[RMDB]
RNA sequence: GGGAACGACUCGAGUAGAGUCGAAAAAAAAGAUAUGGAACUCAGACUCCGAAGAACUGUAGGGAACCGUGUUCGGAAACGAACACUCAGUACCUACAGGGAGGAGGCUGAGUUCCUAAGUCAAAAAUCAGUAUACAUACUUCGGUAUGUAUACUGAAAAAGAAACAACAACAACAAC
Reactivity to DMS in 0.01 (KOAc 150mM, MgCl2 10mM, bicine 150mM(pH8.5), 24C), signal-to-noise 3, nucleotides 027 to 126: a080a080a120a120g000a030u010a200u010g000g010a030a020c010u000c010a020g020a030c000u000c000c010g010a150a140g000a100a190c010u010g000u000a000g020g000g020a100a070c210c300g010u000g000u010u000c010g000g010a020a040a090c000g020a030a010c000a020c000u000c180a120g000u000a250c000c000u000a000c010a000g020g000g000a020g000g010a010g000g000c000u010g000a020g000u000u000c000c000u010a010a020g000u020c020a010a090a090a170a090